[RMDB]
RNA sequence: GGGAACGACUCGAGUAGAGUCGAAAAUCUUGGAACAAGGUCACUCAAAUUGCUAACAUGUUCUUGGAACAGACUCAGCAUUCCCUUAACUUUGUGGGAGAGUUCGUUGUCAACGAUGUUGUCCUCGCGGCCCGGUUCUUCGGAACCGGGAAAAGAAACAACAACAACAAC
Reactivity to 2A3 in 0.01 (KOAc 150mM, MgCl2 10mM, bicine 150mM(pH8.5), 24C), signal-to-noise 2, nucleotides 027 to 129: u160c000u000u140g000g000a070a020c060a060a060g110g090u030c000a000c040u120c000a030a090a140u120u090g010c000u060a000a010c000a000u030g010u000u080c000u010u010g090g000a060a000c030a060g000a150c020u080c090a000g000c000a210u010u000c000c000c000u000u000a030a000c140u050u080u170g080u190g060g000g010a000g000a000g070u100u040c030g000u070u010g300u150c080a070a000c010g180a170u030g000u060u080g040u000c000c000u050c000g000c000g000g030
Reactivity to DMS in 0.01 (KOAc 150mM, MgCl2 10mM, bicine 150mM(pH8.5), 24C), signal-to-noise 3, nucleotides 027 to 129: u000c040u000u000g070g030a140a130c070a060a100g030g000u010c060a090c080u000c100a040a120a120u030u010g070c090u070a110a110c090a060u030g000u010u000c010u020u010g030g000a000a040c000a110g080a050c080u040c110a120g000c030a100u020u020c000c000c030u010u000a130a150c060u000u000u060g070u060g000g000g000a070g000a090g000u010u070c010g000u000u020g000u020c070a160a000c000g030a090u020g000u090u010g020u080c060c010u000c090g030c090g000g000